[RMDB]
RNA sequence: GGGAACGACUCGAGUAGAGUCGAAAAAAAGAUAUGGAGGUAAGGGAGACGAUAGGUAGCGAUGAAACGCUUCGGAAACGAAGCGUGGAGCUACUAUACGUCGAGGAUCUUACCUCCUAAGUCAAAACACCGUAAAUGUCUUCGGACAUUUACGGUGAAAAGAAACAACAACAACAAC
Reactivity to DMS in 0.01 (KOAc 150mM, MgCl2 10mM, bicine 150mM(pH8.5), 24C), signal-to-noise 1, nucleotides 027 to 126: a120a080a080g000a030u010a300u010g000g000a020g000g020u000a010a000g000g000g000a080g020a000c000g010a070u000a200g010g010u020a020g010c030g000a130u000g040a170a160a030c000g030c000u010u000c000g030g000a110a080a160c030g000a000a000g000c010g000u000g010g000a030g030c000u010a000c000u000a050u010a040c060g000u000c010g000a010g000g010a030u010c000u000u000a000c000c000u000c000c000u000a010a030g000u010c030a120a100a050a120